Chemical mapping of a 170-nucleotide RNA with DMS and 2A3. It was measured as part of the RMDB library 15KLIB. DMS adducts were read by reverse transcription with MarathonRT.
RNA sequence: GGGAACGACUCGAGUAGAGUCGAAAAACUGUAUAAAGACCUUACAGGACACAUGCUUGACAGUUAUUCUGUCAUGCUAUGUGGUGAUAAUUCUGCUAAGUUUUGGGAAGAGGCAUUCUAUAGAGAUAAGGAUGGAGGUUCGCCUCCAUCAAAAGAAACAACAACAACAAC
Reactivity to DMS in 0.01 (KOAc 150mM, MgCl2 10mM, bicine 150mM(pH8.5), 24C), signal-to-noise 7, nucleotides 027 to 129: a050c030u020g000u030a040u030a050a040a060g010a130c090c020u000u000a040c030a000g030g010a120c030a000c020a000u000g010c030u000u000g000a000c010a000g000u040u050a150u040u060c000u020g020u000c020a010u000g020c020u040a000u000g000u000g000g000u020g020a090u050a110a090u060u010c030u000g000c110u000a070a050g000u030u000u040u000g000g000g000a050a030g000a040g020g000c050a160u000u000c040u010a050u060a070g000a090g000a070u050a050a120g010
Reactivity to 2A3 in 0.01 (KOAc 150mM, MgCl2 10mM, bicine 150mM(pH8.5), 24C), signal-to-noise 9, nucleotides 027 to 129: a000c040u040g040u050a060u050a100a100a020g110a040c000c000u000u020a010c010a010g010g030a030c000a000c000a000u000g000c000u000u000g000a000c000a000g030u110u120a170u300u160c000u000g000u000c000a000u010g000c030u090a010u010g010u000g000g040u010g030a020u050a120a060u070u020c030u030g060c060u070a080a080g030u050u030u100u150g040g010g000a050a010g020a010g030g000c010a000u040u000c020u030a100u060a100g120a030g020a080u050a120a050g110
For 2A3, 33,686 sequencing reads were counted.